The record gives the reactivity of an RNA of 177 nucleotides to DMS and 2A3. Values cover nucleotides 27 to 126. For DMS the reverse transcriptase was MarathonRT. The RNA was probed in 150 mM KOAc, 10 mM MgCl2 and 150 mM bicine (pH 8.5) at 24 C.
RNA sequence: GGGAACGACUCGAGUAGAGUCGAAAAGGCGCGCGCCGGGACCUCCCACCGUCGGGGCGUCUGGCGGUUCGGUGGGCCAACGGGGCCGUGACCGGUAAAUGCGCUCCCUUGGCCGAUCGCGGAUGGACACUACCUACCAUUUCGAUGGUAGGUAGUGAAAAGAAACAACAACAACAAC
Reactivity to DMS in 0.01 (KOAc 150mM, MgCl2 10mM, bicine 150mM(pH8.5), 24C), signal-to-noise 4, nucleotides 027 to 126: g010g000c060g000c040g010c090g010c040c010g000g010g010a100c070c050u000c030c020c020a100c060c040g010u000c040g000g000g010g030c180g010u020c020u010g010g020c050g010g010u000u000c040g020g030u010g000g000g010c010c000a020a040c290g010g000g010g010c030c000g030u010g010a100c050c070g000g000u000a060a110a050u010g020c110g010c000u000c010c010c040u000u010g000g010c010c000g010a030u000c020g020c110g000g000a120u000g010g020a300
Reactivity to 2A3 in 0.01 (KOAc 150mM, MgCl2 10mM, bicine 150mM(pH8.5), 24C), signal-to-noise 2, nucleotides 027 to 126: g070g020c000g000c000g000c020g010c060c000g030g010g050a100c000c030u020c010c010c000a040c020c020g010u030c040g000g020g050g150c100g100u100c020u020g030g000c030g030g000u050u060c010g040g020u080g030g010g000c010c000a030a000c050g030g000g000g000c040c000g020u010g070a070c030c040g060g010u120a120a170a050u170g020c090g000c040u010c000c000c010u010u010g010g000c010c020g090a090u030c030g000c020g070g020a110u070g070g010a020